[RMDB]
RNA sequence: GGGAACGACUCGAGUAGAGUCGAAAAACAUGCUGGCCAACCCAACCCCACGAUCCUCCAUCUGCAUGAUCAUGAUGUGUUCUCAAAUAUCAGGCCAGUAAAUCACCAUGCUCGUGCUGGUAAAGGCAACUUAUGCCCAAGUUCGCUUGGGCAUAAACACUUUUUAUACUUUCGAGUAUAAAAAGUGAAAAGAAACAACAACAACAAC
Reactivity to DMS in 0.01 (KOAc 150mM, MgCl2 10mM, bicine 150mM(pH8.5), 24C), signal-to-noise 3, nucleotides 027 to 156: a080c020a080u010g020c010u010g010g030c010c020a190a180c090c020c030a120a150c040c010c000c020a110c160g020a120u010c020c020u000c050c030a050u010c040u000g000c040a050u000g010a040u000c040a040u000g030a030u000g010u000g020u000u000c040u010c030a100a090a150u000a100u010c090a120g010g010c000c000a020g010u000a020a050a110u010c020a050c010c010a040u000g000c110u000c020g000u000g020c020u000g020g000u000a020a050a050g020g020c100a040a120c090u000u000a020u000g000c000c000c000a020a040g020u000u000c260g020c020u000u000g000g020g000c000a000u000a000a020a160
Reactivity to 2A3 in 0.01 (KOAc 150mM, MgCl2 10mM, bicine 150mM(pH8.5), 24C), signal-to-noise 5, nucleotides 027 to 156: a000c050a030u050g010c000u000g010g020c000c020a040a020c080c020c040a030a070c020c010c010c020a070c070g060a130u070c010c030u010c020c010a050u040c030u030g000c010a020u010g010a010u030c000a010u020g040a070u100g030u000g030u070u000c030u020c040a080a100a020u240a100u130c090a050g000g000c000c000a000g010u010a010a040a040u110c010a010c020c010a010u030g000c000u010c030g030u020g010c020u030g010g000u040a130a130a050g030g010c020a040a020c040u010u010a000u000g000c000c000c010a010a010g010u030u060c080g020c140u000u020g030g000g000c000a000u000a000a000a000